[RMDB]
RNA sequence: GGGAACGACUCGAGUAGAGUCGAAAAGGAGGCAAGCUUGAUGACGGUUUCAAGGCCCAGGUGGAAAAUGCCCGGAGGAACCUUCUUCCACACCGUGAUCGGAUAACGCAUUUCGUGGACGGUCAGGAGUUUCUGCCGGGCGUGCAGGCCGUGCACGCCGACGUGUACAAUUCGUUGUACACGUCGGAAAAGAAACAACAACAACAAC
Reactivity to DMS in 0.01 (KOAc 150mM, MgCl2 10mM, bicine 150mM(pH8.5), 24C), signal-to-noise 2, nucleotides 027 to 156: g010g020a090g000g050c020a090a040g030c030u020u000g000a040u000g000a090c060g010g000u000u000u010c030a100a090g010g020c030c010c040a080g030g060u000g010g000a050a080a120a060u010g010c010c020c010g040g030a080g030g000a050a030c060c040u000u000c030u000u000c040c050a140c120a120c000c010g030u000g010a130u000c000g010g020a140u010a090a120c140g050c130a160u000u010u000c040g000u010g000g000a070c030g000g000u010c270a090g010g020a100g010u000u010u000c040u000g050c020c020g000g000g040c000g020u000g000c030a050g020g000c070c020g000u000g020c040a060c070g020
Reactivity to 2A3 in 0.01 (KOAc 150mM, MgCl2 10mM, bicine 150mM(pH8.5), 24C), signal-to-noise 5, nucleotides 027 to 156: g040g020a030g000g030c060a020a040g020c040u090u070g040a060u080g020a060c080g020g040u040u110u140c110a080a070g040g000c020c010c020a050g040g060u130g050g020a090a100a050a060u120g000c010c020c010g000g000a020g020g000a020a020c010c020u070u050c010u080u020c080c010a080c020a020c070c010g030u040g050a100u120c040g000g050a070u100a200a100c110g020c160a120u050u100u130c050g010u020g060g120a030c020g030g010u040c040a040g020g030a040g020u010u010u000c030u120g130c000c000g000g000g000c000g000u010g000c010a000g010g090c040c040g020u030g020c030a010c060g020